[RMDB]
RNA sequence: GGGAACGACUCGAGUAGAGUCGAAAAACGAAAACUACGCACUCGCAGCUCAAUAACCUGCGCUGAGCCCUUCUCCCCCAGCUUGCCUGUGUCCUAGGGAAUUGGAAGGUCAUCCUUCACAGGAUCGUCUAGGUAAUCCCUUUCGAGGGAUUACCAACACCUAAUAGAUCUUCGGAUCUAUUAGGUGAAAAGAAACAACAACAACAAC
Reactivity to 2A3 in 0.01 (KOAc 150mM, MgCl2 10mM, bicine 150mM(pH8.5), 24C), signal-to-noise 3, nucleotides 027 to 156: a000c100g020a020a030a020a040c100u130a010c050g040c050a040c040u080c050g030c060a020g050c020u040c140a060a140u100a130a120c010c010u020g040c030g040c150u060g040a060g030c010c000c010u140u080c090u080c010c020c010c010c000a010g020c020u050u140g030c000c000u010g000u020g030u050c010c050u040a040g000g010g100a020a080u140u080g040g010a000a050g050g020u070c040a030u060c010c010u030u050c020a040c000a040g000g020a020u070c040g020u020c070u060a050g000g000u000a000a000u000c000c000c010u000u040u000c070g030a010g000g000g000a000u000u000a000c000c010a000a000
Reactivity to DMS in 0.01 (KOAc 150mM, MgCl2 10mM, bicine 150mM(pH8.5), 24C), signal-to-noise 2, nucleotides 027 to 156: a110c050g050a050a030a120a110c030u000a070c040g000c030a100c070u000c030g020c020a020g060c000u000c000a150a050u010a090a090c170c010u000g020c030g020c150u000g000a070g000c020c040c010u000u000c010u000c050c040c030c000c030a100g000c070u000u000g010c040c030u000g010u010g000u010c040c010u010a080g010g000g010a060a120u000u010g020g000a090a100g030g030u000c070a080u000c020c010u000u000c040a100c060a110g000g020a040u000c030g020u010c070u010a120g030g000u000a030a020u000c000c000c000u000u010u000c200g020a050g030g010g000a010u000u000a000c010c000a040a110